Overview:
The record gives the reactivity of an RNA of 207 nucleotides to 2A3. For 2A3 the reverse transcriptase was SuperScript II with manganese. Conditions: 150 mM KOAc, 10 mM MgCl2 and 150 mM bicine (pH 8.5), 24 C. As a SHAPE reagent, 2A3 marks flexible, mostly unpaired nucleotides at the ribose 2'-OH.
RNA sequence: GGGAACGACUCGAGUAGAGUCGAAAAGGGGUCGCACUGUAGACCGAUUCCUGCUUUUGACGCUCUGAAGCCUCCACGGAGCGAUAAGCAGGAUCGGUCGUAGAUAGUGCGACGGAGGCACCCAAAACUCGGUUCGCUCUUCGGAGCGAACCGAGAACUUUUCGUAUAUGUUCGCAUAUACGAAAAGAAAAGAAACAACAACAACAAC
Reactivity to 2A3 in 0.01 (KOAc 150mM, MgCl2 10mM, bicine 150mM(pH8.5), 24C), signal-to-noise 2, nucleotides 027 to 156: g000g040g020g010u010c000g000c000a000c000u010g040u050a000g000a000c000c000g000a030u260u300c010c010u010g010c020u120u180u240u150g110a020c010g030c010u030c000u010g100a140a080g010c000c010u010c010c000a010c000g010g000a000g010c000g060a090u110a170a090g000c020a000g020g000a000u000c000g010g010u000c000g000u000a000g000a000u010a000g010u000g010c010g000a000c010g000g000a000g010g010c010a030c000c000c000a020a110a100a150c000u020c000g000g000u000u000c020g080c000u000c020u010u120c280g090g000a020g000c000g010a000a030c000c000g010a000g000a000a000